Overview: Structure probing data (DMS and 2A3) for a 177-nucleotide construct. The 2A3 profile rests on 3,648 reads.
RNA sequence: GGGAACGACUCGAGUAGAGUCGAAAAGAUAUGGACUGUACGAGUACCCCCGGUCGGAAACGACCGGCGUACGAUGAGUACAGGUCCUAAGUCAAAAGCUAGAAACCUGUUCGCAGGUUUCUAGCAAUCAAUACAGACACUUCGGUGUCUGUAUUGAAAAAGAAACAACAACAACAAC
Reactivity to DMS in 0.01 (KOAc 150mM, MgCl2 10mM, bicine 150mM(pH8.5), 24C), signal-to-noise 5, nucleotides 027 to 126: g000a070u010a300u000g010g020a150c010u000g000u000a010c000g010a210g020u000a020c000c050c190c040c020g010g000u010c010g010g010a140a070a180c010g000a010c010c000g000g000c300g000u000a000c010g020a120u000g020a280g000u000a010c000a020g000g000u000c000c020u000a040a120g020u010c040a060a090a100a130g020c000u000a000g000a000a010a000c000c000u000g000u000u030c220g010c000a000g000g000u000u010u000c000u000a010g010c010a010a020
Reactivity to 2A3 in 0.01 (KOAc 150mM, MgCl2 10mM, bicine 150mM(pH8.5), 24C), signal-to-noise 2, nucleotides 027 to 126: g010a000u050a010u130g010g000a000c010u000g010u000a000c020g070a070g060u040a020c020c080c030c010c010g010g000u010c010g000g050a040a070a020c000g000a010c000c030g000g000c000g000u020a010c030g060a300u250g100a040g000u000a000c010a020g070g050u020c020c000u040a100a020g030u040c020a050a000a040a240g000c000u000a000g000a010a000a010c000c000u010g050u060u110c300g010c100a000g000g020u000u000u000c000u010a020g000c000a010a000

The RNA was probed in 150 mM KOAc, 10 mM MgCl2 and 150 mM bicine (pH 8.5) at 24 C.